Annotation
An RNA of 177 nucleotides, treated with DMS and 2A3 and read out base by base. It was measured as part of the RMDB library RFMREP. DMS adducts were read by reverse transcription with MarathonRT. High 2A3 reactivity points to a flexible backbone, as in loops and unpaired stretches. The 2A3 profile rests on 2,743 reads.

RNA sequence: GGGAACGACUCGAGUAGAGUCGAAAAUUGCCCGGCAGAGGCUUUGUAUCUGGGCACUAGUCUCAACAGAUGACGACACUUCUGUUCAAUCUCAUAUCCUAUCCAUACUGGAUGUAAAACACGCAUGCACCGUAUUGUAGUUCGCUACAAUACGGUGAAAAGAAACAACAACAACAAC
Reactivity to DMS in 0.01 (KOAc 150mM, MgCl2 10mM, bicine 150mM(pH8.5), 24C), signal-to-noise 3, nucleotides 027 to 126: u010u020g000c070c000c010g010g050c040a030g000a050g020g010c050u010u010u010g010u000a020u010c020u000g000g010g010c080a080c120u000a100g010u010c040u000c060a050a130c110a040g010a050u000g010a070c080g020a080c120a100c030u000u000c050u010g010u010u000c110a060a120u000c010u000c060a080u010a100u000c000c010u000a130u010c110c040a080u010a090c140u010g000g000a020u000g010u010a030a060a040a020c160a050c120g020c080a060u000g030
Reactivity to 2A3 in 0.01 (KOAc 150mM, MgCl2 10mM, bicine 150mM(pH8.5), 24C), signal-to-noise 3, nucleotides 027 to 126: u150u070g030c000c000c000g000g010c020a020g020a010g020g020c000u240u140u180g020u030a020u040c010u040g020g000g000c030a030c060u100a040g070u020c010u010c030a050a040c030a030g040a060u060g120a040c050g070a010c010a020c050u050u000c010u030g040u100u070c020a070a100u010c020u010c070a060u060a050u150c000c010u020a020u020c000c020a040u030a230c040u100g030g030a020u010g040u090a060a100a040a050c070a020c070g060c000a020u100g040